The record gives the reactivity of an RNA of 207 nucleotides to 2A3. The RNA was probed in 150 mM KOAc, 10 mM MgCl2 and 150 mM bicine (pH 8.5) at 24 C.

[RMDB]
RNA sequence: GGGAACGACUCGAGUAGAGUCGAAAAGCCAGUCAGAGGGCGCUACCAUGCAAACUAGGGCUGGCUACUCUUGCACAGAAUCACCUUUCUAUUAUAACCAGUGCAAGAAGGGUUAUUAUACCAUUUAAAAAUCGUGAAUGCUUCGGCAUUCACGAAAGGUAGGCCAUACGUUCGCGUAUGGCCUACCAAAAGAAACAACAACAACAAC
Reactivity to 2A3 in 0.01 (KOAc 150mM, MgCl2 10mM, bicine 150mM(pH8.5), 24C), signal-to-noise 1, nucleotides 027 to 156: g000c000c000a000g010u000c000a000g000a000g110g040g010c000g000c000u060a300c070c130a130u300g000c000a040a040a010c000u020a000g010g000g000c000u000g000g000c000u000a000c000u000c000u000u000g010c000a030c000a000g150a200a160u060c030a300c100c000u120u240u100c060u170a070u040u040a000u050a010a000c000c000a000g000u000g000c000a000a000g000a000a000g020g000g010u010u000a010u080u060a040u070a050c060c030a120u240u300u300a040a060a110a020a020u050c000g000u000g000a000a000u000g020c000u000u040c150g030g010c030a000u000u000c030a010c000g000a030a000a000